An RNA of 207 nucleotides, treated with 2A3 and DMS and read out base by base. The DMS profile rests on 2,058 reads.
RNA sequence: GGGAACGACUCGAGUAGAGUCGAAAACAUCAUCAGAGUGGCUGCUACCAUAGCAGGUUGGGAAUGCCUGGGAAUUAAUGAGUGUCCCUCAGCCCUUAAGUCAAUGACUGAUAGGUGUUGGGAAUAUAUAUCCCAGUUCUCUGACCCAUUGACCAGAUCGCAGUAAAUCAUUCGUGAUUUACUGCGAAAAAGAAACAACAACAACAAC
Reactivity to 2A3 in 0.01 (KOAc 150mM, MgCl2 10mM, bicine 150mM(pH8.5), 24C), signal-to-noise 3, nucleotides 027 to 156: c010a050u170c010a000u010c020a000g040a010g090u070g060g010c020u020g020c040u100a140c030c110a170u170a040g020c020a010g040g000u050u050g020g030g020a100a040u080g020c010c020u000g020g000g020a070a090u110u130a100a050u230g060a040g170u120g050u050c020c010c000u000c020a050g020c000c000c020u040u110a010a020g020u000c150a160a250u290g020a020c010u010g030a040u090a140g030g000u140g040u160u020g010g010g030a040a000u080a000u020a020u020a040u110c010c010c000a010g000u080u000c030u000c000u020g070a090c030c010c000a040u070u150g040a010c020c070a030g060a130
Reactivity to DMS in 0.01 (KOAc 150mM, MgCl2 10mM, bicine 150mM(pH8.5), 24C), signal-to-noise 2, nucleotides 027 to 156: c040a140u000c020a130u000c060a080g030a190g020u030g040g030c040u000g050c050u010a090c050c130a110u060a040g020c020a030g020g020u020u000g030g010g010a070a130u010g010c100c020u000g060g050g030a080a080u000u000a110a130u010g020a120g000u000g020u000c020c000c010u000c040a160g000c040c010c010u010u010a280a100g040u010c000a060a130u000g020a080c000u000g000a170u000a050g000g030u010g000u010u000g000g000g010a040a020u000a050u000a140u000a150u000c000c020c020a300g020u010u000c020u000c050u000g010a240c050c000c040a070u030u020g010a220c050c000a140g000a200